This 177-nucleotide RNA was probed chemically with 2A3 and DMS. 2A3 adducts were read by reverse transcription with SuperScript II with manganese.

RNA sequence: GGGAACGACUCGAGUAGAGUCGAAAACGACUUACCUUCGGGUAAGUCGACAUAGGUGAGUUCAUCGGAUAGCUGCCUAGGUCAGUUCAUCGGAUAGCUGCCACAUGUAACGGUUCGCCGUUACAAAGGAUAUACCAUACUUCGGUAUGGUAUAUCCAAAAGAAACAACAACAACAAC
Reactivity to 2A3 in 0.01 (KOAc 150mM, MgCl2 10mM, bicine 150mM(pH8.5), 24C), signal-to-noise 9, nucleotides 027 to 126: c010g000a000c000u000u000a000c000c000u020u060c240g040g000g000u000a010a000g000u000c000g010a000c010a080u210a060g040g010u090g300a050g010u040u050c100a020u010c080g120g000a020u010a010g000c010u020g030c030c110u140a160g030g170u160c010a000g000u020u030c050a010u020c040g130g000a010u010a010g000c010u000g010c010c000a070c020a080u080g000u010a000a000c010g000g030u030u030c220g010c060c000g000u000u000a000c000a000a070a010
Reactivity to DMS in 0.01 (KOAc 150mM, MgCl2 10mM, bicine 150mM(pH8.5), 24C), signal-to-noise 7, nucleotides 027 to 126: c020g010a030c000u000u000a000c000c010u000u010c220g030g010g010u000a000a000g010u000c000g000a040c200a090u000a090g010g020u000g000a030g030u000u000c200a020u000c020g000g010a010u000a020g000c000u000g010c030c140u010a130g020g010u010c010a010g010u000u000c180a020u000c010g010g010a030u000a020g010c010u000g000c020c010a120c230a140u010g010u000a010a000c000g020g000u000u010c240g020c000c000g010u010u000a000c000a030a070a100
It was measured as part of the RMDB library M2PK50. High 2A3 reactivity points to a flexible backbone, as in loops and unpaired stretches.